[RMDB]
RNA sequence: GGGAACGACUCGAGUAGAGUCGAAAAUGUCAACGAUGUUGUCCUCGCAAUUCUCUCUGGAACCACAACUAAUGUUGACAAAAUACGCCAGCUUCUCAAAGGUGUCACCCUUGACAAGUUGCGUGAUGUUACACUUAGGGUUCGCCCUAAGUGUAACAAAAGAAACAACAACAACAAC
Reactivity to DMS in 0.01 (KOAc 150mM, MgCl2 10mM, bicine 150mM(pH8.5), 24C), signal-to-noise 2, nucleotides 027 to 126: u020g000u000c000a000a020c000g000a300u020g000u000u010g000u010c080c080u000c140g020c130a090a150u000u000c040u020c070u010c120u010g010g000a080a070c100c130a100c000a040a040c030u000a070a120u010g020u000u000g000a030c000a020a090a060a080u020a040c020g000c160c050a050g000c000u000u010c250u000c010a000a010a020g000g010u000g060u000c280a050c060c000c020u000u000g030a000c100a030a010g000u000u000g000c060g000u000g010a060u000
Reactivity to 2A3 in 0.01 (KOAc 150mM, MgCl2 10mM, bicine 150mM(pH8.5), 24C), signal-to-noise 3, nucleotides 027 to 126: u100g000u020c000a000a000c010g030a040u090g000u000u010g010u030c020c010u030c070g070c040a080a170u180u000c080u000c020u000c070u120g030g020a050a030c040c020a030c030a010a020c010u070a080a060u200g000u000u000g000a000c000a030a010a010a010u110a000c010g010c040c030a010g000c000u010u000c000u010c000a100a090a020g030g020u070g120u120c070a080c010c000c010u010u000g010a000c010a030a000g000u000u000g020c020g000u020g030a040u080
The data come from the RNA Mapping Database (RMDB), library 15KREP. The record gives the reactivity of an RNA of 177 nucleotides to DMS and 2A3. Reactivities are given for positions 27 through 126. For DMS, 1,386 sequencing reads were counted. Conditions: 150 mM KOAc, 10 mM MgCl2 and 150 mM bicine (pH 8.5), 24 C.